[RMDB]
RNA sequence: GGGAACGACUCGAGUAGAGUCGAAAACGUGGAGUGAAGGAAAGUUGUGUAGUGCAGUAGAUGUAGGACUACCAAGUUGGCCCUUCGUGCUUCGCAACGCCCAGUGGACGAACGUUGAUGAAUGGUCCCCGGAUAUAUAGUUCGCUAUAUAUCCGGGAAAAGAAACAACAACAACAAC
Reactivity to 2A3 in 0.01 (KOAc 150mM, MgCl2 10mM, bicine 150mM(pH8.5), 24C), signal-to-noise 7, nucleotides 027 to 126: c060g000u020g020g030a040g000u150g030a000a020g040g020a030a050a080g050u020u040g040u020g000u120a020g030u040g080c070a040g050u250a070g070a240u160g110u200a050g020g080a020c010u010a020c010c000a020a050g110u070u040g140g010c000c000c000u000u010c010g050u130g030c000u020u010c000g000c020a060a060c040g050c000c000c020a030g110u150g080g030a040c050g040a180a010c050g050u030u040g020a160u080g050a130a120u090g060g000u030c000
Reactivity to DMS in 0.01 (KOAc 150mM, MgCl2 10mM, bicine 150mM(pH8.5), 24C), signal-to-noise 3, nucleotides 027 to 126: c190g040u000g010g000a040g070u010g000a030a020g010g000a200a080a060g010u000u000g010u040g020u030a010g030u000g020c010a120g000u030a090g020a170u040g040u010a130g000g020a070c000u010a030c020c020a000a030g000u020u000g010g000c180c000c010u000u030c000g030u020g010c030u010u000c010g010c030a060a090c110g000c000c000c000a210g000u010g000g000a060c090g010a050a070c120g000u020u000g000a070u020g020a070a060u010g000g010u030c060